[RMDB]
RNA sequence: GGGAACGACUCGAGUAGAGUCGAAAAUCCAGCGGAGAAACAGGAGCUCGUCUCCUUCCUUUCGCUGCUGGCUCCACAUCCGAUCGUCGCUGAAGCGCCACGCCCCCUCGCCCGGAGCUUCUCUCUGGCUACUACCCGGUGGAUACAACUGAAGCUUCUAUUAUGAUGAGUUCGCUCAUCAUAAUAGAAAAGAAACAACAACAACAAC
Reactivity to 2A3 in 0.01 (KOAc 150mM, MgCl2 10mM, bicine 150mM(pH8.5), 24C), signal-to-noise 2, nucleotides 027 to 156: u010c000c000a000g020c010g070g000a030g010a040a090a150c300a240g030g010a020g000c040u120c300g290u130c120u000c010c000u010u040c000c000u000u000u010c010g000c010u010g000c000u000g000g000c020u050c010c030a120c010a080u060c050c050g060a120u090c050g070u040c030g000c020u110g080a180a030g060c020g020c080c040a050c070g030c000c010c000c000c000u000c000g020c000c000c000g040g030a010g000c000u050u020c020u000c000u010c010u000g040g020c000u020a050c010u030a030c060c010c010g020g030u010g010g040a040u090a170c060a070a030c050u080g060a040a010g030c010u020u000